Chemical mapping of a 177-nucleotide RNA with DMS and 2A3.
[RMDB]
RNA sequence: GGGAACGACUCGAGUAGAGUCGAAAAGUUCCGACCUGCACGAAUGGUGUAACGAUCUGGGCACUGUCUCAGCCAUGAGCUCGGUGAAAUUGUAGUAUCGGUGAAGAUGCCGGUUACCCGCUACGGGAUGUCCUCGUCAGUUCGCUGACGAGGACAUAAAAGAAACAACAACAACAAC
Reactivity to DMS in 0.01 (KOAc 150mM, MgCl2 10mM, bicine 150mM(pH8.5), 24C), signal-to-noise 2, nucleotides 027 to 126: g010u000u000c000c000g010a130c130c020u000g000c040a060c070g010a050a070u000g020g000u000g010u010a050a080c110g000a100u010c060u020g000g030g000c050a130c140u010g040u000c040u000c040a140g000c080c110a060u000g000a090g020c030u000c030g010g010u010g000a050a060a140u040u020g000u050a050g040u010a020u000c010g000g010u010g010a120a110g040a150u070g000c010c020g080g000u030u000a050c020c000c000g040c090u020a030c090g020g000g000
Reactivity to 2A3 in 0.01 (KOAc 150mM, MgCl2 10mM, bicine 150mM(pH8.5), 24C), signal-to-noise 2, nucleotides 027 to 126: g090u080u040c000c010g000a020c000c020u040g000c000a000c090g110a190a080u200g070g050u040g010u040a080a030c030g040a120u000c040u090g010g000g080c010a030c110u060g000u090c040u040c110a020g000c000c000a130u130g000a020g020c050u040c020g020g010u100g030a000a030a020u120u110g000u090a040g000u060a060u140c020g000g000u010g100a090a110g040a170u150g000c000c000g000g000u040u000a010c000c000c000g000c010u060a010c000g020g000g000
It was measured as part of the RMDB libraries RFM100 and RFMREP. The 2A3 profile rests on 877 reads. Reactivities are given for positions 27 through 126.